Annotation: This 177-nucleotide RNA was probed chemically with DMS and 2A3. Source: RMDB library OK1LIB, as collected in RNAgym. For DMS, 2,931 sequencing reads were counted.
[RMDB]
RNA sequence: GGGAACGACUCGAGUAGAGUCGAAAACUUGGGUGGCAAGCGUUGGCGUAUAUGCCAUUUCUGGGGAUUUCCUCCACCAGGGAUAUAUCCCUAUAUGGGUUUGGGCUAUACCUUAUAUAUACGCAAAGGGUAUAUCUUUCUUCGGAAAGAUAUACCCAAAAGAAACAACAACAACAAC
Reactivity to DMS in 0.01 (KOAc 150mM, MgCl2 10mM, bicine 150mM(pH8.5), 24C), signal-to-noise 2, nucleotides 027 to 126: c080u010u020g010g000g040u000g020g020c110a070a000g000c160g000u050u020g000g000c030g000u000a040u000a030u010g020c000c060a030u010u020u050c160u030g010g010g000g000a030u010u020u010c000c070u010c080c070a050c120c110a080g000g020g020a040u020a060u010a100u000c030c000c010u000a050u030a040u040g010g000g020u020u000u030g000g010g000c150u010a080u020a120c040c010u000u000a090u040a040u000a030u000a010c040g020c000a110a060a110
Reactivity to 2A3 in 0.01 (KOAc 150mM, MgCl2 10mM, bicine 150mM(pH8.5), 24C), signal-to-noise 2, nucleotides 027 to 126: c020u030u020g000g000g040u070g000g070c090a070a020g030c130g120u030u110g140g000c010g000u020a000u010a010u100g020c000c000a000u010u050u030c080u050g000g000g000g000a000u020u030u050c010c030u020c010c010a220c040c020a050g000g020g000a000u040a010u010a030u110c010c020c030u080a120u000a050u150g080g030g000u020u070u040g080g000g030c000u050a050u120a130c010c000u020u030a080u000a020u020a000u010a170c060g000c000a000a020a170